[RMDB]
RNA sequence: GGGAACGACUCGAGUAGAGUCGAAAAAGUGCUUUACUUCCAACUAUGUAGUCAGUUUUGGAAUAGGUGUGGUGUGGUGUUGAAAAAAAUGUAUAUUCUGUUGAUUUGGGGUGGAGAGUUCUGUAGAUGUCUAUUAGGUCCACUUGGUGCAGAGCUGGCUAAUUCAACCAUUCGUGGUUGAAUUAGCAAAAGAAACAACAACAACAAC
Reactivity to 2A3 in 0.01 (KOAc 150mM, MgCl2 10mM, bicine 150mM(pH8.5), 24C), signal-to-noise 1, nucleotides 027 to 156: a000g090u120g040c070u050u100u180a060c030u030u000c000c010a020a040c050u040a070u230g070u070a060g070u090c100a010g010u020u020u040u180g020g010a070a040u030a090g060g010u020g020u030g060g020u040g020u040g040g060u050g050u040u090g050a130a020a000a000a020a060a040u080g040u030a050u010a040u130u000c050u090g050u010u030g030a070u020u020u060g030g000g000g000u050g010g010a040g000a000g010u050u140c010u030g020u040a000g010a110u020g000u000c000u020a070u090u110a090g060g030u030c000c000a050c000u020u040g000g000u020g040c030a000g000a000g120c070u060g020